[RMDB]
RNA sequence: GGGAACGACUCGAGUAGAGUCGAAAAGCUCGGAGACGAGCAAGGCUGACAAAACCCUGUCCCAACCUCCACGUGGUGUCGGCUGGAUAAUGCUGCAUUAUGUUGCAUUUAUCAACUGGGAAUAAAAAUUAUCCCUGGGCUUCGGCCCAGGGAUAAUAAAAGAAACAACAACAACAAC
Reactivity to 2A3 in 0.01 (KOAc 150mM, MgCl2 10mM, bicine 150mM(pH8.5), 24C), signal-to-noise 1, nucleotides 027 to 126: g020c000u000c000g020g020a090g010a020c020g000a000g000c010a000a040g020g000c000u000g000a020c020a020a210a050a050c030c000c020u010g010u000c010c010c000a000a040c030c040u030c020c030a090c150g090u060g000g000u030g000u010c000g000g000c040u010g050g000a000u000a050a010u040g000c000u020g000c020a020u240u000a150u300g020u010u000g060c000a020u010u010u010a030u050c020a010a010c050u080g000g020g140a120a020u180a140a010a000a000